[RMDB]
RNA sequence: GGGAACGACUCGAGUAGAGUCGAAAACCACAAUAGGAUGGCAAAAGGGGACUCGGGUCCGUCGUUCCAUCCUUUUCUUACCUUUUGGCCGGCAUGGCCCCAGCCUCCUCGCUGGCGCCGGCUGGGCGCGUAUUUAAGACUUCGGUCUUAAAUACGCAAAAGAAACAACAACAACAAC
Reactivity to 2A3 in 0.01 (KOAc 150mM, MgCl2 10mM, bicine 150mM(pH8.5), 24C), signal-to-noise 2, nucleotides 027 to 126: c010c000a040c010a040a090u150a050g020g000a020u030g010g010c070a010a020a050a100g100g030g030g020a010c040u080c270g300g030g000u000c030c010g140u070c010g040u060u010c010c000a000u010c000c000u010u000u050u000c030u060u090a050c000c000u070u100u070u180g110g020c000c000g030g000c070a150u120g030g000c010c010c010c000a010g010c000c020u080c010c000u050c040g000c000u010g010g000c000g000c010c000g030g000c030u020g000g000g010c050
Reactivity to DMS in 0.01 (KOAc 150mM, MgCl2 10mM, bicine 150mM(pH8.5), 24C), signal-to-noise 3, nucleotides 027 to 126: c030c010a170c260a080a070u010a010g000g000a060u000g010g010c200a040a010a070a110g010g010g000g020a010c010u020c280g020g000g000u000c020c030g010u000c050g010u000u000c000c010a010u000c010c010u000u000u010u010c050u000u000a180c060c050u000u010u000u010g010g010c020c010g010g010c030a080u010g050g020c060c140c000c000a010g000c000c130u000c180c170u000c220g000c010u000g000g000c270g010c010c010g010g000c010u000g000g010g020c200
Structure probing data (2A3 and DMS) for a 177-nucleotide construct. Conditions: 150 mM KOAc, 10 mM MgCl2 and 150 mM bicine (pH 8.5), 24 C. The 2A3 profile rests on 2,359 reads. The data come from the RNA Mapping Database (RMDB), library 15KREP.